RNA sequence: GGGAACGACUCGAGUAGAGUCGAAAAAGCCACCGCUACGGCGGUGGCAAGUAGAAAAGUUGGUGCUUAGACCACGCCCUCUACCGUAAUAAUAGAUAAAUAGGCGAGUAUCAGUACGCUGAUACAACUGCCUUAACUGAUUCGUCAGUUAAGGCAGAAAAGAAACAACAACAACAAC
Reactivity to 2A3 in 0.01 (KOAc 150mM, MgCl2 10mM, bicine 150mM(pH8.5), 24C), signal-to-noise 6, nucleotides 027 to 126: a000g000c000c000a010c000c010g000c000u040a040c300g130g000c000g020g000u000g010g000c000a000a010g000u000a000g010a010a040a020a020g050u080u060g020g010u080g060c200u270u090a040g070a080c000c010a000c000g000c000c010c000u020c000u000a040c020c010g080u030a070a050u050a180a040u070a220g190a080u130a120a140a050u120a070g020g010c050g040a040g010u000a000u010c000a000g030u010a040c210g030c100u000g000a000u000a010c010a010a070
Reactivity to DMS in 0.01 (KOAc 150mM, MgCl2 10mM, bicine 150mM(pH8.5), 24C), signal-to-noise 2, nucleotides 027 to 126: a080g030c020c000a010c000c010g010c020u000a090c170g040g050c000g030g060u010g000g040c000a020a000g000u000a030g030a030a040a050a060g000u030u010g000g000u000g000c130u000u090a200g010a110c010c010a030c020g010c000c000c090u000c000u000a020c010c080g010u020a110a100u000a080a100u010a030g000a140u010a070a100a060u020a000g010g030c060g000a120g100u000a000u000c010a020g040u000a060c300g020c030u000g040a010u000a000c030a090a170
This 177-nucleotide RNA was probed chemically with 2A3 and DMS. It was measured as part of the RMDB libraries RFM100 and RFMREP. DMS (dimethyl sulfate) methylates the pairing face of unpaired adenines and cytosines.